Structure probing data (DMS and 2A3) for a 177-nucleotide construct. Reactivities are given for positions 27 through 126. The 2A3 profile rests on 5,063 reads. High DMS reactivity at an A or C suggests that its Watson-Crick edge is free. It was measured as part of the RMDB library OK2TRN. 2A3 adducts were read by reverse transcription with SuperScript II with manganese.

RNA sequence: GGGAACGACUCGAGUAGAGUCGAAAAGACACGACGGAGACGUCGUGUCAAAGAGUGGGAAACCACUCAAAGAGCCACAGCUUCGGCUGUGGCUCAAGGCGCGGCCAAGUCCGCGGAACAAACGAAACAAAAUGCAUAAUUUCGAUUAUGCAUUUUGAAAAGAAACAACAACAACAAC
Reactivity to DMS in 0.01 (KOAc 150mM, MgCl2 10mM, bicine 150mM(pH8.5), 24C), signal-to-noise 4, nucleotides 027 to 126: g000a030c000a000c010g000a010c000g010g010a270g010a230c010g030u000c000g020u000g000u010c000a030a070a120g000a010g020u010g000g010g000a160a090a210c000c000a000c000u000c000a040a080a080g000a020g000c010c010a020c000a020g030c000u000u020c230g020g010c000u000g050u000g000g020c020u000c020a010a030g010g000c010g020c000g010g010c010c190a070a160g010u010c010c010g030c000g010g020a090a070c190a030a060a090c150g000a130a090a130
Reactivity to 2A3 in 0.01 (KOAc 150mM, MgCl2 10mM, bicine 150mM(pH8.5), 24C), signal-to-noise 2, nucleotides 027 to 126: g010a000c000a000c010g010a000c000g030g020a050g030a050c020g000u000c000g010u000g000u000c000a000a000a000g000a000g000u010g000g000g000a000a040a080c010c000a010c000u000c000a030a030a000g000a000g030c010c010a000c000a010g060c020u130u140c300g070g030c000u020g000u000g010g000c010u000c000a000a010g000g010c010g000c010g000g010c020c080a120a050g050u020c010c000g000c030g000g020a010a000c050a060a090a010c060g070a050a000a020